[RMDB]
RNA sequence: GGGAACGACUCGAGUAGAGUCGAAAAAUCGCAGGGUGGUAGAGCACAAUACAUACGAGAAAACUUGAGACAGGCCAACAGUUGUGAAUAUCGUAGAGGUUGAUUCCUUUCCUUCACAAAAAAAACAUCGCAACAUAAUAUUCGUAUUAUGUUGCGAAAAAGAAACAACAACAACAAC
Reactivity to DMS in 0.01 (KOAc 150mM, MgCl2 10mM, bicine 150mM(pH8.5), 24C), signal-to-noise 4, nucleotides 027 to 126: a070u010c070g020c040a040g000g010g030u000g010g030u000a040g000a070g020c070a050c060a090a070u020a050c100a090u000a090c070g020a090g000a080a060a080a090c050u000u000g010a090g000a070c070a050g010g000c050c090a060a050c150a070g010u000u000g020u000g000a030a060u010a080u010c110g010u010a040g010a040g010g010u010u000g000a150u000u000c010c000u000u000u000c040c040u000u020c050a050c100a020a000a000a040a040a080a060a090c160a080
Reactivity to 2A3 in 0.01 (KOAc 150mM, MgCl2 10mM, bicine 150mM(pH8.5), 24C), signal-to-noise 2, nucleotides 027 to 126: a000u050c030g000c040a030g030g060g000u050g010g000u040a000g010a030g040c010a010c040a050a020u080a070c030a020u090a050c060g010a040g070a070a090a020a020c000u030u050g010a010g000a030c040a010g010g050c020c010a040a020c040a120g080u090u080g020u010g040a080a050u080a040u150c070g020u060a020g010a010g080g040u020u070g050a100u140u230c010c020u060u030u030c010c020u100u080c040a060c000a040a050a040a000a020a010a000a030c030a020